[RMDB]
Record summary
Conditions: 150 mM KOAc, 10 mM MgCl2 and 150 mM bicine (pH 8.5), 24 C. Structure probing data (DMS) for a 177-nucleotide construct. Reactivities are given for positions 27 through 126.
RNA sequence: GGGAACGACUCGAGUAGAGUCGAAAAGAUAUGGAAAGUCCACGCGAGUGAGAUUCCCGAAGAACAACCUCGGAAACGAGGUUGGGAGGGAAUCUCACUCGAACUACGUGAAGACUUUCCUAAGUCACAGAACUUCUAUGUUCGCAUAGAAGUUCUGAAAAGAAACAACAACAACAAC
Reactivity to DMS in 0.01 (KOAc 150mM, MgCl2 10mM, bicine 150mM(pH8.5), 24C), signal-to-noise 1, nucleotides 027 to 126: g010a000u020a300u000g000g030a030a010a000g000u000c000c020a050c010g010c000g060a010g020u000g020a000g020a040u000u000c000c010c000g000a070a140g010a250a240c000a000a000c000c030u000c000g000g000a110a030a170c000g030a010g000g000u000u000g000g000g010a080g070g040g000a000a020u000c000u000c000a000c000u000c030g040a030a000c170u000a300c040g020u000g000a110a060g000a000c010u000u000u000c000c000u030a010a120g000u000c020a290